[RMDB]
Structure probing data (DMS and 2A3) for a 177-nucleotide construct.
DMS (dimethyl sulfate) methylates the pairing face of unpaired adenines and cytosines.
For DMS, 3,404 sequencing reads were counted.
The data come from the RNA Mapping Database (RMDB), library OK2TST.
Reactivities are given for positions 27 through 126.
Conditions: 150 mM KOAc, 10 mM MgCl2 and 150 mM bicine (pH 8.5), 24 C.
RNA sequence: GGGAACGACUCGAGUAGAGUCGAAAAUCAAGGAUCUCACAGCUGAAGAGACUGUUAAAAGGUUUGAAGAGGAGAACAACAUUAAGUAUGAUGUUAUCAGCUCGUUUUUGACUACAGAUUACAAGAACCUACAAAAUAACUUCGGUUAUUUUGUAGGAAAAGAAACAACAACAACAAC
Reactivity to DMS in 0.01 (KOAc 150mM, MgCl2 10mM, bicine 150mM(pH8.5), 24C), signal-to-noise 4, nucleotides 027 to 126: u000c030a130a230g010g010a060u000c030u000c080a060c060a050g020c040u000g010a130a100g000a120g000a070c020u000g000u000u010a090a080a140a100g000g000u000u010u020g020a050a080g010a040g000g000a050g000a070a040c110a020a010c020a030u000u000a030a150g020u000a120u010g010a050u000g000u000u000a050u010c200a100g020c020u010c020g000u000u000u000u000u000g010a010c020u010a060c110a060g010a100u000u010a070c110a060a210g000a070a140
Reactivity to 2A3 in 0.01 (KOAc 150mM, MgCl2 10mM, bicine 150mM(pH8.5), 24C), signal-to-noise 4, nucleotides 027 to 126: u050c020a030a090g090g020a080u000c020u030c020a040c020a040g050c050u070g020a080a030g070a050g080a140c010u010g040u020u020a110a130a040a040g060g030u040u150u170g060a060a010g020a010g110g020a030g010a030a010c020a030a000c010a020u060u050a140a050g130u120a150u200g020a000u000g020u040u030a070u090c030a020g000c000u020c060g040u000u030u020u040u060g000a000c000u030a000c010a070g050a100u080u080a030c040a040a060g060a060a010